[RMDB]
RNA sequence: GGGAACGACUCGAGUAGAGUCGAAAAUGAAACACAGCUUUCUUGUUUCCAGGAUACUGUCCAGAGAAGUCACACAAACUUAGACAUUUCUUCUUCUGAUGUCCACUUGCCAUGACUGUGUGAGGAACUUACCCAAUCGAUUCGUCGAUUGGGUAAGAAAAGAAACAACAACAACAAC
Reactivity to 2A3 in 0.01 (KOAc 150mM, MgCl2 10mM, bicine 150mM(pH8.5), 24C), signal-to-noise 9, nucleotides 027 to 126: u140g020a020a020a010c060a010c030a050g040c070u030u060u030c010u040u070g080u060u090u040c030c010a020g010g000a020u040a130c030u070g050u060c030c020a010g000a000g010a100a010g040u040c020a030c000a010c020a120a200a040c090u150u160a040g050a050c030a080u040u080u020c020u060u010c010u100u000c020u040g060a060u060g040u030c010c000a040c040u050u070g040c030c020a050u090g020a090c050u020g010u000g000u010g090a070g020g050a030a020
Reactivity to DMS in 0.01 (KOAc 150mM, MgCl2 10mM, bicine 150mM(pH8.5), 24C), signal-to-noise 7, nucleotides 027 to 126: u020g000a070a060a070c070a080c090a100g010c090u000u000u000c020u010u000g010u000u010u010c010c040a130g020g010a080u010a070c080u010g000u000c050c060a070g000a090g030a060a070g000u010c020a030c090a070c080a050a070a100c100u020u000a060g010a050c070a060u000u010u010c060u010u020c060u000u010c050u010g010a040u000g000u010c020c050a060c120u000u010g010c060c060a070u020g010a100c100u010g020u000g020u000g010a060g000g020a070a130